Chemical mapping of a 177-nucleotide RNA with DMS. Source: RMDB library OK2TST, as collected in RNAgym. For DMS the reverse transcriptase was MarathonRT. High DMS reactivity at an A or C suggests that its Watson-Crick edge is free.

RNA sequence: GGGAACGACUCGAGUAGAGUCGAAAAGCCAUAAAAGCAGCAUAACUGAAGGGAUCGAGGGUUGCCUCUUGGAGAUAAGCCAGCAUUCUGGCGCGGUUAAGCGGGAUAAAGCCGUGAUGCAUGGCGCCCCGAACACGAAAUUCGUUUCGUGUUCGGGAAAAGAAACAACAACAACAAC
Reactivity to DMS in 0.01 (KOAc 150mM, MgCl2 10mM, bicine 150mM(pH8.5), 24C), signal-to-noise 1, nucleotides 027 to 126: g010c060c020a120u000a060a060a070a120g020c030a050g010c020a040u020a090a140c060u000g010a110a060g000g000g010a020u010c030g000a130g030g010g010u010u010g030c020c000u010c080u000u030g020g000a080g000a200u000a050a180g000c000c010a010g000c130a050u010u000c050u000g000g010c000g020c030g010g000u000u000a030a170g000c020g020g000g010a150u000a060a050a140g010c020c020g000u000g000a060u020g010c050a060u000g010g020c020g010c130